RNA sequence: GGGAACGACUCGAGUAGAGUCGAAAAGCUGUGGGUUAGUCAGGACCUAACGCGUACCCAAACGGGGAAGUGGAUGGACAACAGGUUAAUAUUCCUGUACUACCUUAUACUGCGAUGGAGGGACGGAAAGAUAACCAUUGUUCGCAAUGGUUAUCUUAAAAGAAACAACAACAACAAC
Reactivity to DMS in 0.01 (KOAc 150mM, MgCl2 10mM, bicine 150mM(pH8.5), 24C), signal-to-noise 9, nucleotides 027 to 126: g010c020u000g030u040g010g000g010u010u010a050g010u020c110a090g010g000a080c050c010u010a070a130c090g000c020g010u010a250c000c010c010a060a090a130c220g000g010g010g010a130a160g010u000g000g000a130u010g010g010a110c150a110a060c060a030g000g000u000u020a080a100u010a170u020u010c000c000u000g010u010a070c090u000a060c050c020u000u030a110u020a100c070u000g010c030g000a080u010g000g010a100g000g000g000a100c090g000g000a080
Reactivity to 2A3 in 0.01 (KOAc 150mM, MgCl2 10mM, bicine 150mM(pH8.5), 24C), signal-to-noise 8, nucleotides 027 to 126: g080c090u050g000u080g040g030g010u050u040a040g050u080c060a040g020g120a080c010c000u030a120a040c020g010c000g040u100a080c010c000c000a050a140a040c110g010g000g010g010a060a020g020u020g030g040a110u070g030g020a030c040a150a020c020a120g060g040u090u080a110a060u060a110u160u100c010c000u000g010u030a020c020u030a010c000c000u020u040a070u040a060c040u030g020c010g050a060u070g050g030a050g010g020g000a010c040g030g050a130